[RMDB]
This 177-nucleotide RNA was probed chemically with DMS and 2A3. Conditions: 150 mM KOAc, 10 mM MgCl2 and 150 mM bicine (pH 8.5), 24 C. Reactivities are given for positions 27 through 126. DMS adducts were read by reverse transcription with MarathonRT.
RNA sequence: GGGAACGACUCGAGUAGAGUCGAAAAUUUAAACGAAACAAUGGAACGUUGACAAUAAGGUCUCGUCAUGGGGAGUUUGUCAUUAAGAACACAACUCAACUUGGGAUGAAGCCCUGUGCUGAUAGAGCUAUCCAAUCAUCUUCGGAUGAUUGGAUAGAAAAGAAACAACAACAACAAC
Reactivity to DMS in 0.01 (KOAc 150mM, MgCl2 10mM, bicine 150mM(pH8.5), 24C), signal-to-noise 5, nucleotides 027 to 126: u000u040u030a090a030a060c040g010a140a120a090c160a150a070u030g000g020a110a090c070g010u000u010g000a110c200a040a080u010a050a050g000g000u000c010u000c020g020u030c010a080u010g000g010g000g000a040g000u000u010u010g000u010c030a110u030u050a100a120g010a100a030c090a020c180a010a000c040u000c010a030a020c030u000u010g010g010g000a040u010g000a070a060g000c050c000c040u000g000u000g020c060u010g010a100u020a090g010a100g000
Reactivity to 2A3 in 0.01 (KOAc 150mM, MgCl2 10mM, bicine 150mM(pH8.5), 24C), signal-to-noise 4, nucleotides 027 to 126: u060u050u060a080a060a030c080g070a060a030a100c070a150a170u160g080g020a110a030c110g010u040u080g050a000c000a060a080u100a150a060g130g000u000c000u010c010g020u050c000a040u020g000g080g000g000a070g020u050u030u080g010u040c030a080u160u190a120a030g130a220a030c030a020c020a060a090c040u030c030a000a110c010u090u070g070g030g070a060u110g080a040a020g010c000c010c000u030g020u050g020c050u020g010a120u100a170g080a000g050